[RMDB]
RNA sequence: GGGAACGACUCGAGUAGAGUCGAAAACCGUAGGCAUCCCGUGGUUAGCUUGGAUUUACCAGGCCACUAUAUUCGAAAGAGUAUAGGAGCCUGGUUGUCAGCUAACCGGAUGCCUAAACGGAAAAGUAGCUGAAUGAGUUCGCUCAUUCAGCUACAACUAGUAGUAAUCCUUCGGGAUUACUACUAGAAAAGAAACAACAACAACAAC
Reactivity to DMS in 0.01 (KOAc 150mM, MgCl2 10mM, bicine 150mM(pH8.5), 24C), signal-to-noise 1, nucleotides 027 to 156: c010c000g040u000a000g000g000c000a000u000c000c010c200g030u020g050g010u000u000a020g020c010u000u010g000g000a050u000u000u000a030c000c010a000g010g040c000c010a080c000u000a000u010a020u000u000c000g000a300a140a300g010a060g000u000a020u000a020g020g000a170g060c000c000u010g030g010u000u000g020u000c010a030g000c000u000a000a000c010c000g010g010a010u000g000c000c000u000a000a010a060c000g020g000a050a100a130a140g050u000a030g010c020u000g010a020a020u000g010a070g000u010u010c300g010c030u000c000a010u000u000c010a000g000c010u000a000c000a030a070
Reactivity to 2A3 in 0.01 (KOAc 150mM, MgCl2 10mM, bicine 150mM(pH8.5), 24C), signal-to-noise 3, nucleotides 027 to 156: c000c000g010u010a020g000g000c010a020u080c050c080c110g300u180g030g010u020u000a020g010c030u050u140g170g010a080u210u200u060a030c000c000a010g000g010c020c000a010c010u000a000u000a000u010u010c010g060a120a100a070g010a100g000u000a010u010a000g040g000a010g010c010c010u000g030g000u000u000g010u000c000a000g000c000u000a010a000c000c000g000g000a000u000g040c000c000u000a020a000a000c010g050g000a080a070a050a090g000u010a000g000c000u000g000a000a000u000g000a000g050u090u160c230g090c160u000c000a000u000u000c000a000g000c000u000a000c000a000a000